[RMDB]
RNA sequence: GGGAACGACUCGAGUAGAGUCGAAAAAUUCCGAGGAUGUUUCCCAGCCAGGGAUUUUCAUCCUCGAGUUUCUUGAUGGUUCUCCUGCUCUUCCGGAGCUUUCUUUCGAGGUCUUCCGCGUCUUUUCGCUUACAUCUAUGUUCGCAUAGAUGUAAGCAAAAGAAACAACAACAACAAC
Reactivity to DMS in 0.01 (KOAc 150mM, MgCl2 10mM, bicine 150mM(pH8.5), 24C), signal-to-noise 1, nucleotides 027 to 126: a080u000u010c090c020g000a050g000g000a000u010g000u010u000u010c000c000c000a230g030c300c300a180g000g000g000a030u020u020u030u020c000a010u000c000c010u000c010g000a030g000u010u000u010c030u000u000g010a080u010g010g010u020u000c070u010c020c050u000g010c070u000c030u000u010c130c100g020g000a080g010c050u000u010u000c030u010u000u000c030g000a010g020g000u000c020u000u000c010c010g020c170g000u000c030u000u000u000u000c200